Structure probing data (2A3 and DMS) for a 177-nucleotide construct. The reactions ran in a buffer of 150 mM KOAc, 10 mM MgCl2 and 150 mM bicine (pH 8.5), at 24 C. The 2A3 profile rests on 1,653 reads. The data come from the RNA Mapping Database (RMDB), library TTRDEL. High 2A3 reactivity points to a flexible backbone, as in loops and unpaired stretches.
[RMDB]
RNA sequence: GGGAACGACUCGAGUAGAGUCGAAAAGAUAUGGAUCCAGUAGCGAGAAUGAUCGGAAACGAUAUUCGAUGAGCUACGGAUCCUAAGUCAAAAGUCAGGCUGUUUUGUUCGCAAAACAGCCUGACAAGAACCGAUUAUGGUUCGCCAUAAUCGGUUCAAAAGAAACAACAACAACAAC
Reactivity to 2A3 in 0.01 (KOAc 150mM, MgCl2 10mM, bicine 150mM(pH8.5), 24C), signal-to-noise 1, nucleotides 027 to 126: g020a000u070a030u250g000g010a000u000c050c130a180g010u020a000g030c010g000a060g060a130a020u210g140a110u150c000g000g040a110a040a010c030g000a000u000a040u040u010c070g050a210u200g140a060g020c000u010a000c040g010g000a000u000c000c010u010a000a020g040u000c010a130a000a030a000g050u000c020a000g020g000c000u010g020u030u010u000u040g150u100u200c300g010c220a060a000a000a000c000a000g000c000c000u000g000a000c000a000a020
Reactivity to DMS in 0.01 (KOAc 150mM, MgCl2 10mM, bicine 150mM(pH8.5), 24C), signal-to-noise 1, nucleotides 027 to 126: g000a080u000a300u000g000g020a000u000c000c020a180g050u010a000g000c010g010a240g010a000a000u000g020a010u010c030g010g000a070a120a130c010g000a030u000a050u010u000c000g030a170u000g030a210g000c000u000a020c000g000g000a010u000c010c000u000a020a070g000u000c050a060a120a110a080g000u000c000a010g020g000c000u000g000u000u000u000u000g000u020u030c230g000c000a000a000a000a000c000a000g000c000c000u000g000a000c000a030a090